[RMDB]
RNA sequence: GGGAACGACUCGAGUAGAGUCGAAAAAUCUUCGACGGUGAUGUUGAUCCCGAGUGGGUAGAGAACUUGAACUCUGUGCUGGAUGACAACAAACUCUUGACUCUGCCUAAUGGAGAGCGUCUUUCUAUAAUAGCGUGAGCUUCGGCUCACGCUAUUAAAAAGAAACAACAACAACAAC
Reactivity to DMS in 0.01 (KOAc 150mM, MgCl2 10mM, bicine 150mM(pH8.5), 24C), signal-to-noise 1, nucleotides 027 to 126: a080u000c110u000u000c000g000a100c070g020g020u010g020a060u000g000u020u010g000a090u000c010c000c040g000a090g050u000g010g000g000u060a030g020a060g000a070a060c120u000u000g000a050a140c080u000c070u000g000u000g010c090u000g010g020a120u000g000a140c090a070a030c100a030a060a110c070u000c040u000u010g000a290c010u020c000u000g010c000c060u020a090a090u000g010g000a050g010a050g000c130g000u000c010u000u000u000c040u000a100
An RNA of 177 nucleotides, treated with DMS and read out base by base. It was measured as part of the RMDB library OK2TST. The RNA was probed in 150 mM KOAc, 10 mM MgCl2 and 150 mM bicine (pH 8.5) at 24 C. For DMS the reverse transcriptase was MarathonRT.